[RMDB]
RNA sequence: GGGAACGACUCGAGUAGAGUCGAAAAGAAACUCUUAUGAUCGCGUAGCUUAUCUUGGUACAAAUACACCAAUCGAUAAAUGUUACGAAUGUGAUUUUGAAGGUGAAUUUGUUCCUACAGAAGAAGAUAAAUUAUACCGGUUCGCCGGUAUAAUUUAAAAAGAAACAACAACAACAAC
Reactivity to DMS in 0.01 (KOAc 150mM, MgCl2 10mM, bicine 150mM(pH8.5), 24C), signal-to-noise 3, nucleotides 027 to 126: g010a240a220a070c010u010c010u020u000a030u000g020a100u010c040g000c020g000u000a010g000c010u000u000a020u010c000u010u000g010g020u010a130c110a120a060a170u000a140c220a020c000c010a020a060u010c130g000a020u000a010a030a090u010g040u010u000a020c030g000a050a040u010g000u000g010a090u000u000u000u000g010a060a060g020g010u000g020a050a180u000u010u020g000u000u000c010c000u000a110c220a090g010a100a090g000a120a090g000a220
Reactivity to 2A3 in 0.01 (KOAc 150mM, MgCl2 10mM, bicine 150mM(pH8.5), 24C), signal-to-noise 1, nucleotides 027 to 126: g010a050a160a020c020u000c010u070u030a020u110g080a040u040c030g020c010g080u020a010g000c000u000u040a000u050c020u020u010g010g000u040a040c010a060a300a030u110a070c060a000c000c010a030a050u120c050g010a010u030a050a170a000u220g000u010u030a020c010g070a080a060u140g000u010g050a030u080u000u050u190g090a120a020g000g030u050g020a020a040u040u040u050g000u020u040c000c010u020a000c010a010g300a230a010g140a050a000g100a050
An RNA of 177 nucleotides, treated with DMS and 2A3 and read out base by base. The DMS profile rests on 1,793 reads. Values are in units of 0.01, from 0 to 300, in steps of 10. It was measured as part of the RMDB library OK2TST. DMS adducts were read by reverse transcription with MarathonRT.